The record gives the reactivity of an RNA of 177 nucleotides to 2A3 and DMS.
Reactivities are given for positions 27 through 126.
High DMS reactivity at an A or C suggests that its Watson-Crick edge is free.
RNA sequence: GGGAACGACUCGAGUAGAGUCGAAAAGAAAGAACUGAAACAACCCGUCUCGAAUAGCGUUGUGACUGAUGACUGCAUUUGUAAUUUUCUCAGCGGCAGUGCUAUUCCAGUUGGGUUGUUUGCGGAAUACCAGAGCUAAUUUCGAUUAGCUCUGGUAAAAAGAAACAACAACAACAAC
Reactivity to 2A3 in 0.01 (KOAc 150mM, MgCl2 10mM, bicine 150mM(pH8.5), 24C), signal-to-noise 9, nucleotides 027 to 126: g160a020a110a010g070a070a040c040u070g000a010a000a000c000a000a000c000c000c000g040u010c000u000c000g000a000a000u000a000g010c010g010u000u020g070u090g140a170c010u030g020a040u200g010a050c050u050g070c090a170u090u140u160g120u220a140a140u050u110u110u030c030u000c010a000g000c030g110g000c000a000g010u000g010c010u010a000u000u010c000c000a010g000u100u090g010g000g000u000u000g000u000u000u000g020c010g030g050a050a040
Reactivity to DMS in 0.01 (KOAc 150mM, MgCl2 10mM, bicine 150mM(pH8.5), 24C), signal-to-noise 5, nucleotides 027 to 126: g000a100a110a080g010a150a130c010u010g000a030a010a000c010a010a000c000c000c000g010u000c000u010c300g000a020a000u000a000g000c000g010u020u000g020u000g010a110c020u000g000a020u020g010a020c300u000g000c110a170u010u010u040g010u030a060a070u010u000u010u010c120u000c000a010g000c280g000g000c000a010g010u000g000c010u000a000u000u000c000c050a010g000u000u030g010g010g010u000u000g000u000u000u000g020c030g010g000a110a150